Conditions: 150 mM KOAc, 10 mM MgCl2 and 150 mM bicine (pH 8.5), 24 C. The record gives the reactivity of an RNA of 177 nucleotides to DMS. It was measured as part of the RMDB library TTRINS.
RNA sequence: GGGAACGACUCGAGUAGAGUCGAAAAGAUAUGGAAUCGUCGUCAACGCACCAAGGGAGUCGGAGAAGGGUCGGAAACGACCCGUAACGACGACGAUCUUGGUGCGUUGACGAGCGAUUCCUAAGUCCAUUUGUACUAGCUUCGGCUAGUACAAAUGAAAAGAAACAACAACAACAAC
Reactivity to DMS in 0.01 (KOAc 150mM, MgCl2 10mM, bicine 150mM(pH8.5), 24C), signal-to-noise 1, nucleotides 027 to 126: g000a110u020a300u000g000g000a020a000u000c000g030u000c020g050u000c010a020a010c010g000c000a000c040c000a000a000g000g000g000a300g030u000c000g020g030a280g000a100a200g030g000g040u010c000g020g000a140a110a250c000g030a000c000c000c020g010u000a050a160c020g020a300c000g010a020c210g010a300u000c000u010u000g000g010u010g010c000g010u000u000g000a000c000g000a000g020c000g020a020u000u000c020c010u000a010a070g010u030c030